[RMDB]
RNA sequence: GGGAACGACUCGAGUAGAGUCGAAAAGCGUACUACGACCAUUGUCAGAGCUAAGGUCCUCGAUAAGCAGGUCCCAAAUAGGACCUGCUUUUGACGAGGACCGAAGCUCUUGGAUUUAUGGUCGUAUCGCAAACUCAUGGCCUUCGGGCCAUGAGAAGCUACCAAUAGAGUUCGCUCUAUUGGUAGCAAAAGAAACAACAACAACAAC
Reactivity to 2A3 in 0.01 (KOAc 150mM, MgCl2 10mM, bicine 150mM(pH8.5), 24C), signal-to-noise 2, nucleotides 027 to 156: g010c010g040u120a050c060u010a000c040g000a000c000c000a000u000u040g010u020c020a000g010a000g000c000u080a100a020g000g000u000c000c000u000c010g050a070u030a040a010g000c000a000g000g010u010c010c030c050a230a280a100u270a070g000g000a000c000c000u000g040c070u020u000u000u010g050a000c000g010a000g000g000a000c000c000g010a000a000g000c000u000c000u010u030g000g000a000u030u280u280a020u000g000g000u000c000g000u000a000u010c000g050c020a000a000a130c000u020c000a010u000g000g000c000c000u010u020c260g070g010g000c010c000a010u000g000a000g000a000a000
Reactivity to DMS in 0.01 (KOAc 150mM, MgCl2 10mM, bicine 150mM(pH8.5), 24C), signal-to-noise 1, nucleotides 027 to 156: g000c030g030u000a040c130u000a000c040g000a060c000c010a010u000u010g000u010c000a070g010a000g030c010u020a070a300g010g000u000c000c000u000c020g020a150u000a080a000g000c000a010g020g000u000c010c000c050a070a160a190u020a020g010g000a020c000c020u000g010c000u000u000u000u010g030a160c100g010a080g000g020a000c000c000g000a080a040g010c010u000c000u000u010g050g000a040u000u000u000a000u000g010g000u000c000g000u000a000u000c010g040c000a110a120a140c020u000c020a000u000g010g020c000c010u000u000c300g050g030g020c000c000a020u000g000a020g020a040a090
This 207-nucleotide RNA was probed chemically with 2A3 and DMS.
For 2A3, 3,041 sequencing reads were counted.
Source: RMDB library RNAMAK, as collected in RNAgym.
The DMS profile rests on 3,368 reads.
For DMS the reverse transcriptase was MarathonRT.
Conditions: 150 mM KOAc, 10 mM MgCl2 and 150 mM bicine (pH 8.5), 24 C.